[RMDB]
RNA sequence: GGGAACGACUCGAGUAGAGUCGAAAACAUUGUGGAUAUCUUUCUCGAUAUCAAGGUAUAGAGGACUCUUCGAACGAGUGACUGGUGGGUGGUUUUUUGCCGAUUCCGGGUCGUAUAGCACAUCAAAAGGGUUACUUUGCUGACGAAUAUGAGAGGGCUAUGAAUUUACGUUCGCGUAAAUUCAUAGAAAAGAAACAACAACAACAAC
Reactivity to 2A3 in 0.01 (KOAc 150mM, MgCl2 10mM, bicine 150mM(pH8.5), 24C), signal-to-noise 4, nucleotides 027 to 156: c040a040u100u160g080u110g140g020a030u020a020u060c020u010u230u040c110u070c080g010a020u030a010u070c020a030a030g060g000u070a050u100a180g090a050g030g050a030c010u000c010u050u050c110g080a120a110c070g030a050g040u030g080a060c060u050g030g040u080g010g030g020u050g020g000u050u060u020u030u200u150g040c020c000g020a030u100u050c030c000g010g010g020u020c020g020u050a040u070a120g040c040a020c010a100u130c070a070a080a020a030g040g020g020u040u040a060c030u080u090u070g020c010u010g020a020c050g030a050a030u080a050u130g060a060g020a020g020g000g010
Reactivity to DMS in 0.01 (KOAc 150mM, MgCl2 10mM, bicine 150mM(pH8.5), 24C), signal-to-noise 3, nucleotides 027 to 156: c050a150u000u000g020u000g020g010a090u000a040u000c020u000u000u000c130u000c110g000a110u000a040u000c010a140a130g020g020u000a090u000a110g000a210g010g010a060c030u000c010u000u000c040g010a110a110c090g010a120g030u010g020a070c050u010g000g030u010g000g030g030u010g000g020u000u000u000u010u000u000g030c020c020g000a210u000u010c020c040g020g020g030u000c040g030u000a070u000a100g020c070a040c060a090u000c060a030a050a050a090g010g000g040u000u000a040c060u010u000u000g010c040u000g020a070c070g010a090a100u000a110u000g010a090g020a090g050g000g000
This 207-nucleotide RNA was probed chemically with 2A3 and DMS. The RNA was probed in 150 mM KOAc, 10 mM MgCl2 and 150 mM bicine (pH 8.5) at 24 C.